About this RNA:
Chemical mapping of a 177-nucleotide RNA with 2A3 and DMS. The reactions ran in a buffer of 150 mM KOAc, 10 mM MgCl2 and 150 mM bicine (pH 8.5), at 24 C. It was measured as part of the RMDB library OK1LIB. 2A3 adducts were read by reverse transcription with SuperScript II with manganese. For DMS the reverse transcriptase was MarathonRT.
RNA sequence: GGGAACGACUCGAGUAGAGUCGAAAAUGAGAAUACUUUUAGUACAAGCGAGUACACGCAGUAUACUGCUACUUGUGUGAGAAUACUUUUAGUACAAGCGAGUACACGCAGUAUACUGCCACUUGUGUGGAAACGGCAGUUUCGACUGCCGUUUCCAAAAAGAAACAACAACAACAAC
Reactivity to 2A3 in 0.01 (KOAc 150mM, MgCl2 10mM, bicine 150mM(pH8.5), 24C), signal-to-noise 1, nucleotides 027 to 126: u300g030a030g040a090a070u110a030c000u000u080u100u050a040g110u240a170c010a050a050g000c010g000a000g010u200a000c070a000c220g030c000a040g010u000a000u000a000c000u000g010c000u000a000c000u000u000g000u000g040u030g010a050g070a090a020u000a060c070u070u130u100u130a010g010u030a000c030a000a030g040c070g000a000g000u000a040c090a060c220g010c000a000g000u000a000u000a000c000u000g020c020c070a000c000u000u000g000u030g050
Reactivity to DMS in 0.01 (KOAc 150mM, MgCl2 10mM, bicine 150mM(pH8.5), 24C), signal-to-noise 1, nucleotides 027 to 126: u000g010a150g000a080a230u000a010c050u010u010u010u010a000g040u080a010c140a170a280g000c040g000a010g040u000a050c090a260c300g000c000a000g000u000a000u000a130c270u000g050c000u000a000c000u000u000g000u000g000u000g000a160g050a190a120u010a000c000u000u000u000u000a190g080u000a050c000a080a080g020c000g000a070g000u030a000c300a020c300g000c010a000g000u000a000u000a010c000u000g000c010c090a010c000u000u000g000u000g000